The record gives the reactivity of an RNA of 207 nucleotides to 2A3 and DMS. The RNA was probed in 150 mM KOAc, 10 mM MgCl2 and 150 mM bicine (pH 8.5) at 24 C. The DMS profile rests on 2,222 reads.
RNA sequence: GGGAACGACUCGAGUAGAGUCGAAAAUUUAGUACAGCAGCACAUCUGUGGAUGACAAAGAACCAAGAAUUUCGGAUUUUUGUUAAGCAUGAUACCAUAACAUUCGGUGACCAUUUGUCUGGAGUUGACAAUGAAGGCGACGACGUUGAGGCACUCCGUAUGGCUAGUAGUUCGCUACUAGCCAUACAAAAGAAACAACAACAACAAC
Reactivity to 2A3 in 0.01 (KOAc 150mM, MgCl2 10mM, bicine 150mM(pH8.5), 24C), signal-to-noise 2, nucleotides 027 to 156: u050u080u060a030g040u060a030c020a060g000c000a010g030c000a060c000a110u090c060u010g100u030g120g040a090u120g000a010c040a050a040a010g020a060a050c050c050a120a020g110a150a170u120u160u300c080g040g030a050u060u000u000u030u020g020u000u080a030a030g020c040a040u060g030a020u120a190c030c020a030u080a230a110c020a080u170u120c050g090g020u030g010a020c020c000a100u070u080u130g050u000c050u080g050g090a140g010u030u100g020a030c010a040a000u090g050a050a030g020g000c010g040a040c010g000a030c040g020u040u030g030a040g040g040c070a020c080u060c030c010
Reactivity to DMS in 0.01 (KOAc 150mM, MgCl2 10mM, bicine 150mM(pH8.5), 24C), signal-to-noise 2, nucleotides 027 to 156: u000u000u020a080g000u000a040c010a070g020c020a060g010c020a080c080a120u010c050u000g030u020g020g000a110u000g030a130c040a050a090a070g040a060a140c030c000a080a150g040a180a120u010u010u000c100g030g000a130u000u000u000u000u020g010u000u010a080a110g030c020a120u040g030a080u010a090c040c010a090u000a040a010c040a160u000u010c070g000g080u000g010a120c040c000a130u000u000u000g010u000c020u000g080g010a150g030u010u000g050a060c050a060a110u010g010a130a110g010g030c060g010a110c080g000a060c090g010u000u000g010a060g000g030c040a050c020u000c000c060
About this RNA
For DMS the reverse transcriptase was MarathonRT. The data come from the RNA Mapping Database (RMDB), library OK3TST.